[RMDB]
RNA sequence: GGGAACGACUCGAGUAGAGUCGAAAAGGGUGAUCGUUCGCGAUCACCCAAAGAAGCACGAAAGGCCAAGAAAUCCCGGAACAUUGGUAUGGAAGCCUGAGAAAACUGACAAGUUCGCUUGUCAGAACAAUAGUUUAAAGUUCGCUUUAAACUAUUGAAAAGAAACAACAACAACAAC
Reactivity to DMS in 0.01 (KOAc 150mM, MgCl2 10mM, bicine 150mM(pH8.5), 24C), signal-to-noise 8, nucleotides 027 to 126: g000g010g020u000g010a010u000c000g020u000u010c220g030c010g020a010u000c000a010c000c000c010a010a020a060g000a140a110g010c070a060c090g010a080a100a070g000g000c010c040a070a100g010a080a120a110u000c010c010c010g010g000a060a080c100a120u010u000g010g030u000a090u010g010g010a170a130g000c030c010u000g000a140g000a080a090a090a140c000u000g000a010c000a010a010g000u000u010c200g020c000u000u000g000u000c000a010g010a060a100
Reactivity to 2A3 in 0.01 (KOAc 150mM, MgCl2 10mM, bicine 150mM(pH8.5), 24C), signal-to-noise 3, nucleotides 027 to 126: g000g000g020u000g000a000u000c020g010u050u030c130g000c000g090a010u010c000a000c000c000c010a000a000a000g010a010a000g080c060a010c090g050a290a110a000g070g010c020c040a050a040g090a080a210a050u050c050c010c000g000g010a090a040c060a120u090u220g020g020u100a070u120g040g010a040a060g010c000c010u050g010a050g040a070a090a010a040c010u000g000a000c010a020a000g020u030u060c210g040c050u000u000g010u000c000a000g000a000a000
Description: An RNA of 177 nucleotides, treated with DMS and 2A3 and read out base by base. Reactivities are given for positions 27 through 126. The 2A3 profile rests on 3,215 reads. The reactions ran in a buffer of 150 mM KOAc, 10 mM MgCl2 and 150 mM bicine (pH 8.5), at 24 C. For DMS, 13,271 sequencing reads were counted. For DMS the reverse transcriptase was MarathonRT.